[RMDB]
RNA sequence: GGGAACGACUCGAGUAGAGUCGAAAAAGCAUGUUAGGUUCGCAUGGUGCACUAUUGGGUUAUUAGUAACUAAGUAAGCUUACAAUCGAAAAUGUUUAACCAUAAAAGGGUAAAAUGGUGUAAGACAGAUACCCUCUGAGCUUCGGCUCAGAGGGAACUGUGUACAAUGCUUCGGCAUUGUACACAGAAAAGAAACAACAACAACAAC
Reactivity to 2A3 in 0.01 (KOAc 150mM, MgCl2 10mM, bicine 150mM(pH8.5), 24C), signal-to-noise 2, nucleotides 027 to 156: a000g030c030a020u070g000u060u090a060g010g050u070u090c060g000c070a040u040g010g050u040g020c020a040c070u080a110u100u110g010g010g010u040u050a060u030u010a050g040u020a010a010c020u000a000a070g100u010a070a040g110c050u030u080a020c060a060a110u070c050g020a080a020a000a000u020g050u070u060u050a030a030c030c000a000u070a070a140a070a010g070g010g060u120a070a100a040a020u040g000g000u000g020u030a060a020g010a040c010a010g070a030u180a150c000c000c000u020c010u000g010a000g010c010u020u100c210g040g040c000u000c000a000g000a000g000g000g000a000a000
Reactivity to DMS in 0.01 (KOAc 150mM, MgCl2 10mM, bicine 150mM(pH8.5), 24C), signal-to-noise 1, nucleotides 027 to 156: a120g010c040a090u010g010u000u020a020g040g000u010u000c040g140c040a030u000g020g000u000g000c150a040c060u000a040u000u000g000g040g030u000u000a040u010u040a120g070u010a090a110c030u000a100a100g010u000a070a140g020c010u000u030a050c010a090a110u000c080g010a070a010a110a050u000g010u000u000u000a070a040c010c000a040u000a060a130a060a100g020g000g030u010a040a050a060a070u010g000g000u000g010u000a110a040g000a090c040a040g000a150u000a060c000c000c000u000c000u000g050a040g010c000u010u010c290g070g000c000u000c000a000g010a010g010g010g000a010a010